[RMDB]
RNA sequence: GGGAACGACUCGAGUAGAGUCGAAAAUCAGCUCACCUUUAUUCUUCAGUACCCUCAGACAUAGUCAUUUUUUUCUUGAUUUGACCAAAAUCUGAUGGAUUUUGCUCCAACCAAGUUACAGUAAAUGUGACUCUGCUUCUACACACACACGCUCACACCUAUCCAAAAUGUUCGCAUUUUGGAUAGGAAAAGAAACAACAACAACAAC
Reactivity to 2A3 in 0.01 (KOAc 150mM, MgCl2 10mM, bicine 150mM(pH8.5), 24C), signal-to-noise 7, nucleotides 027 to 156: u070c020a000g020c030u020c020a060c010c000u050u110u090a110u140u100c050u080u080c050a030g030u080a110c010c010c000u030c030a020g010a050c020a040u110a030g010u030c020a040u010u010u020u010u030u070u080c040u050u060g030a030u010u000u020g000a010c020c000a030a020a020a060u010c020u100g070a130u180g080g000a010u040u020u030u060g010c000u000c010c010a010a020c000c000a030a010g020u070u060a080c050a040g060u150a050a080a110u070g010u010g010a010c000u010c030u050g030c030u080u020c030u090a030c030a000c010a000c000a000c000a010c090g050c020u030c010a030c010a010
Reactivity to DMS in 0.01 (KOAc 150mM, MgCl2 10mM, bicine 150mM(pH8.5), 24C), signal-to-noise 2, nucleotides 027 to 156: u030c060a110g000c060u000c040a080c060c050u000u000u020a070u010u000c050u000u000c040a150g020u000a070c030c010c020u020c080a050g020a050c040a130u000a040g000u000c000a010u000u000u000u000u000u000u000c090u000u010g000a010u000u000u000g010a030c050c000a030a060a090a060u000c020u010g000a140u000g020g010a070u000u000u000u000g020c050u010c020c040a030a050c020c020a030a040g000u010u000a080c130a160g030u000a050a050a110u000g020u010g010a020c010u000c040u000g040c030u000u000c010u000a100c030a090c020a060c040a050c050a080c070g010c040u010c030a070c060a200

About this RNA: Chemical mapping of a 207-nucleotide RNA with 2A3 and DMS. It was measured as part of the RMDB library OK3TST. For 2A3, 8,051 sequencing reads were counted. For 2A3 the reverse transcriptase was SuperScript II with manganese. DMS adducts were read by reverse transcription with MarathonRT.